[RMDB]
RNA sequence: GGGAACGACUCGAGUAGAGUCGAAAAGAUAUGGAAUGCUUGUCAGAGCAUACAUCAUCAUGGAGUACAUCGGAAACGAUGUACUCUGCACGGUGUACUAGCUCUUGGAUUUAGCAUUCCUAAGUCACUGUCUUAUGAAGUUCGCUUCAUAAGACAGAAAAGAAACAACAACAACAAC
Reactivity to 2A3 in 0.01 (KOAc 150mM, MgCl2 10mM, bicine 150mM(pH8.5), 24C), signal-to-noise 2, nucleotides 027 to 126: g010a030u070a040u130g000g010a000a010u000g000c010u030u040g010u030c020a030g000a000g010c010a010u010a010c000a000u000c010a020u000c050a080u300g020g000a000g020u000a000c000a000u010c000g000g020a070a110a040c000g010a000u010g000u000a000c000u000c000u010g000c030a030c120g020g000u010g000u000a180c230u190a130g010c000u000c000u060u190g150g020a040u300u300u260a000g000c000a000u010u020c000c000u000a090a010g010u010c020a000
Reactivity to DMS in 0.01 (KOAc 150mM, MgCl2 10mM, bicine 150mM(pH8.5), 24C), signal-to-noise 5, nucleotides 027 to 126: g000a030u000a300u000g010g010a030a010u000g020c010u000u010g000u000c020a030g000a010g020c000a300u000a010c010a000u000c000a070u020c200a190u000g000g000a020g010u010a010c000a010u000c010g020g000a150a090a210c010g010a010u000g000u000a000c000u000c000u000g010c280a100c280g010g020u000g010u000a010c280u010a130g010c000u000c000u000u010g020g010a030u000u020u000a010g020c010a030u000u000c000c000u010a020a050g010u000c030a290

The record gives the reactivity of an RNA of 177 nucleotides to 2A3 and DMS. For DMS, 4,868 sequencing reads were counted. It was measured as part of the RMDB library TTRINS. High 2A3 reactivity points to a flexible backbone, as in loops and unpaired stretches. For 2A3 the reverse transcriptase was SuperScript II with manganese. Reactivities are rounded to 0.1 and cut off at 0 and 3. DMS adducts were read by reverse transcription with MarathonRT.